[RMDB]
RNA sequence: GGGAACGACUCGAGUAGAGUCGAAAAUAUACUCUCCAAGCCACCGAAAGGAGACUACUCCGCUACCAUGGAGGAUUGGGAGGAUGAACACAACGGUAUCCUGGCUGCCCUCAGAGAAGCGUGUGUCCGUAUAUCCACGUUUCGACGUGGAUAUACGAAAAGAAACAACAACAACAAC
Reactivity to 2A3 in 0.01 (KOAc 150mM, MgCl2 10mM, bicine 150mM(pH8.5), 24C), signal-to-noise 2, nucleotides 027 to 126: u070a000u000a010c020u020c030u000c010c000a010a020g030c000c020a050c020c010g100a170a020a020g020g040a040g020a040c030u130a170c000u030c010c000g040c040u100a100c040c060a110u220g020g000a010g020g020a030u040u070g010g030g010a040g050g050a040u090g100a070a000c020a000c010a060a220c030g070g010u040a080u060c020c010u000g050g000c040u080g010c000c010c040u030c030a020g020a000g010a080a000g050c040g030u040g000u000g010u020c020
Reactivity to DMS in 0.01 (KOAc 150mM, MgCl2 10mM, bicine 150mM(pH8.5), 24C), signal-to-noise 4, nucleotides 027 to 126: u020a100u000a110c040u000c010u030c000c030a040a050g030c020c010a130c020c030g000a100a120a140g020g010a070g020a110c180u000a110c010u000c030c020g040c160u010a120c180c110a090u010g010g010a060g000g000a070u000u010g000g010g030a030g000g000a100u000g000a110a060c090a010c080a050a050c060g030g010u000a090u000c020c030u010g000g000c040u000g000c050c030c050u000c040a030g000a110g020a070a080g010c060g020u000g020u000g000u010c050
Structure probing data (2A3 and DMS) for a 177-nucleotide construct.
Source: RMDB library OK2TST, as collected in RNAgym.
The 2A3 profile rests on 2,895 reads.